[RMDB]
RNA sequence: GGGAACGACUCGAGUAGAGUCGAAAACAUGGUACUGCGCGCGAAUCAAUUCUCUUUCCUUGAGGUUUGGAUGAGGAGCGUCUAUUUAGGGAAGUAACGGAAGUCGUAGUUCAACUCUCGCGCGUUAGGGUUAAUCUAUCUUCGGAUAGAUUAACCCAAAAGAAACAACAACAACAAC
Reactivity to DMS in 0.01 (KOAc 150mM, MgCl2 10mM, bicine 150mM(pH8.5), 24C), signal-to-noise 2, nucleotides 027 to 126: c160a130u030g000g010u030a070c080u000g010c000g020c000g020c020g000a030a070u050c160a060a100u000u020c060u010c010u000u040u010c030c030u000u000g020a030g000g050u010u020u010g000g000a030u000g010a130g050g030a030g030c110g020u010c040u000a030u040u000u010a030g000g000g010a040a050g030u030a080a070c120g010g010a040a070g000u010c010g000u000a120g030u000u020c080a080a080c110u000c070u000c000g020c000g010c000g000u000u010a080
Reactivity to 2A3 in 0.01 (KOAc 150mM, MgCl2 10mM, bicine 150mM(pH8.5), 24C), signal-to-noise 6, nucleotides 027 to 126: c050a040u170g130g020u170a060c020u040g000c000g000c010g000c000g040a010a060u090c030a090a120u160u010c090u010c000u020u060u030c030c020u030u070g060a060g050g100u110u210u170g110g010a070u070g040a110g150g090a060g060c020g020u010c020u050a160u050u170u100a030g030g010g010a020a030g030u090a120a030c050g030g050a050a030g050u130c050g030u050a040g040u080u110c020a030a040c010u010c020u010c040g000c000g000c000g010u030u070a050